[RMDB]
RNA sequence: GGGAACGACUCGAGUAGAGUCGAAAACCCCCGGAGAUCCGUAAUGGAGAGAAGGGGGUGAAGGCGUGAUGGCGUAAGCCGGCCGACUCCUGGGGCCCGUGAAAAGGGGGGCAGUUGGACCGUACCGUUGAUAGAUGUGUUUCGACACAUCUAUCAAAAAAGAAACAACAACAACAAC
Reactivity to DMS in 0.01 (KOAc 150mM, MgCl2 10mM, bicine 150mM(pH8.5), 24C), signal-to-noise 7, nucleotides 027 to 126: c000c010c000c010c000g000g000a300g010a050u000c010c000g020u030a160a110u070g010g000a020g000a030g010a300a160g010g000g000g010g010u000g000a070a080g000g000c020g020u010g000a090u020g000g010c020g010u030a060a080g000c020c010g010g010c010c010g000a110c060u000c020c010u010g010g010g010g010c030c040c040g010u020g010a050a050a080a090g000g000g000g000g010g000c070a040g020u000u000g000g010a080c060c040g000u010a110c060c080g010
Reactivity to 2A3 in 0.01 (KOAc 150mM, MgCl2 10mM, bicine 150mM(pH8.5), 24C), signal-to-noise 3, nucleotides 027 to 126: c000c000c010c000c010g000g050a080g020a100u010c000c010g090u300a140a210u300g000g000a010g000a010g010a020a040g000g000g000g000g000u020g030a030a010g040g000c030g020u120g080a110u160g040g010c020g000u040a070a020g000c000c020g000g000c020c000g010a030c020u030c020c020u000g010g010g010g010c000c000c030g070u080g050a090a030a020a120g020g010g010g000g000g000c010a030g000u060u070g030g010a060c010c020g010u040a060c000c050g040